Structure probing data (DMS and 2A3) for a 177-nucleotide construct. The data come from the RNA Mapping Database (RMDB), libraries RFM100 and RFMREP.
RNA sequence: GGGAACGACUCGAGUAGAGUCGAAAACGGUGCCGGAAGGUCACGCGGAGGUGUUAGCGCGAGCGAAGCACCGAAGCCAAGCCCCGGUAAACGGCGGCCGUAACUAUAACGGUCCUAAGGUAGCGAAUUUACAAACAUAGUUCGCUAUGUUUGUAAAAAAAGAAACAACAACAACAAC
Reactivity to DMS in 0.01 (KOAc 150mM, MgCl2 10mM, bicine 150mM(pH8.5), 24C), signal-to-noise 9, nucleotides 027 to 126: c030g010g010u000g010c000c000g000g000a120a080g010g020u010c060a210c300g010c000g010g000a300g000g000u010g000u010u000a300g010c010g000c290g000a160g010c000g000a180a140g000c000a010c000c000g000a300a180g000c010c080a070a250g000c020c000c000c030g000g010u010a010a060a080c040g000g010c130g000g000c010c000g000u000a070a100c200u030a110u030a080a060c050g000g010u020c010c040u010a070a080g000g010u010a030g000c050g010a080a090
Reactivity to 2A3 in 0.01 (KOAc 150mM, MgCl2 10mM, bicine 150mM(pH8.5), 24C), signal-to-noise 9, nucleotides 027 to 126: c010g020g020u040g010c000c010g030g020a150a110g040g020u130c050a010c070g000c000g010g020a050g000g000u010g080u270u020a010g000c010g000c030g040a030g020c000g000a020a000g000c000a000c000c000g000a010a000g000c000c000a040a020g000c000c000c000c000g000g010u030a070a070a010c020g060g000c030g010g000c000c000g030u050a050a040c070u070a040u070a300a010c010g010g030u040c000c020u140a150a080g100g000u040a020g080c020g060a040a040